[RMDB]
The record gives the reactivity of an RNA of 207 nucleotides to DMS and 2A3. DMS adducts were read by reverse transcription with MarathonRT. For 2A3 the reverse transcriptase was SuperScript II with manganese. The RNA was probed in 150 mM KOAc, 10 mM MgCl2 and 150 mM bicine (pH 8.5) at 24 C.

RNA sequence: GGGAACGACUCGAGUAGAGUCGAAAAGUGAUAAUCAAGGGAAGGAUAUAAACGAUACGCCAAAGCGGUUUCAACAGAGUCUAGAGGUCACUCCAUGCACGGUAAAAUCGCUGGAUAGCCGUCAAAUGACCGACAAUCGCAAAGAAAAGCAAUAGCCAUAACCUCUCACAUUCGUGUGAGAGGUUAUAAAAGAAACAACAACAACAAC
Reactivity to DMS in 0.01 (KOAc 150mM, MgCl2 10mM, bicine 150mM(pH8.5), 24C), signal-to-noise 2, nucleotides 027 to 156: g000u000g010a070u000a110a040u000c010a100a040g030g000g050a050a050g020g000a180u000a090u010a050a100a110c060g010a140u010a080c050g040c030c050a020a050a100g010c050g010g000u000u000u000c030a160a140c040a040g000a160g020u000c010u000a130g000a160g030g040u000c070a150c060u040c000c030a050u000g010c070a090c050g050g020u000a080a120a060a090u000c030g050c060u000g000g000a060u000a160g020c000c010g000u000c060a110a010a180u000g000a050c020c040g000a030c170a100a040u040c040g030c070a080a090a070g030a040a060a080a060g030c070a030a080u010a030g040c030c080
Reactivity to 2A3 in 0.01 (KOAc 150mM, MgCl2 10mM, bicine 150mM(pH8.5), 24C), signal-to-noise 3, nucleotides 027 to 156: g010u050g040a050u030a130a020u100c060a030a020g070g020g010a030a060g010g000a000u030a010u010a130a050a000c030g030a050u040a100c050g010c020c050a050a010a060g020c030g010g040u050u090u080c050a060a040c040a070g080a010g070u000c040u070a040g000a020g090g000u020c020a020c080u020c080c010a030u120g020c080a010c070g020g010u030a070a040a000a070u100c080g000c050u000g000g000a000u040a020g020c010c020g000u000c000a040a040a100u080g020a010c010c000g000a000c000a000a060u040c030g000c050a050a090a050g070a030a060a000a000g010c020a030a100u060a080g060c010c050